RNA sequence: GGGAACGACUCGAGUAGAGUCGAAAAGCAAACGACGAAACUUACGCUUUAGCCGCUUAAGGCUAGCCGUUGCAGCAGUCGGUCAAUGGGCUGUGUGGCGAAAGCCACCGCAACGUCAUCUUACAUUGACUGGUUUCCUGCCGGGUUAUUUGGCAGGCGUCACUUAUAUGUUCGCAUAUAAGUGACGAAAAGAAACAACAACAACAAC
Reactivity to 2A3 in 0.01 (KOAc 150mM, MgCl2 10mM, bicine 150mM(pH8.5), 24C), signal-to-noise 5, nucleotides 027 to 156: g070c050a060a090a050c100g180a040c070g080a130a080a060c090u110u120a050c080g020c030u160u160u090a000g000c010c020g070c160u220u240a130a030g000g000c000u000a000g000c000c010g020u010u010g000c010a020g000c000a000g020u010c000g010g010u000c000a000a020u030g020g010g000c000u000g000u010g000u000g060g020c010g030a100a030a000g000c000c000a000c000c010g010c010a020a010c000g090u090c020a100u060c050u190u160a030c000a020u000u010g000a010c020u030g080g000u030u050u020c000c000u000g000c000c000g170g000g040u230u150a190u130u200u220g060g000c000a010g000g000
Reactivity to DMS in 0.01 (KOAc 150mM, MgCl2 10mM, bicine 150mM(pH8.5), 24C), signal-to-noise 2, nucleotides 027 to 156: g030c050a070a030a050c020g010a070c000g000a290a110a130c050u000u020a070c060g030c030u000u000u000a050g020c010c030g000c240u000u000a090a130g010g040c020u000a070g010c020c040g010u000u000g000c000a250g010c050a150g000u010c030g010g010u000c040a020a030u020g010g000g000c010u010g020u010g070u010g020g010c010g010a140a110a230g000c000c010a000c000c130g030c030a030a070c010g010u000c090a100u000c100u000u000a120c020a040u000u000g010a040c030u010g010g020u000u000u000c000c010u000g020c000c010g030g000g020u000u010a050u000u000u000g020g030c000a040g010g000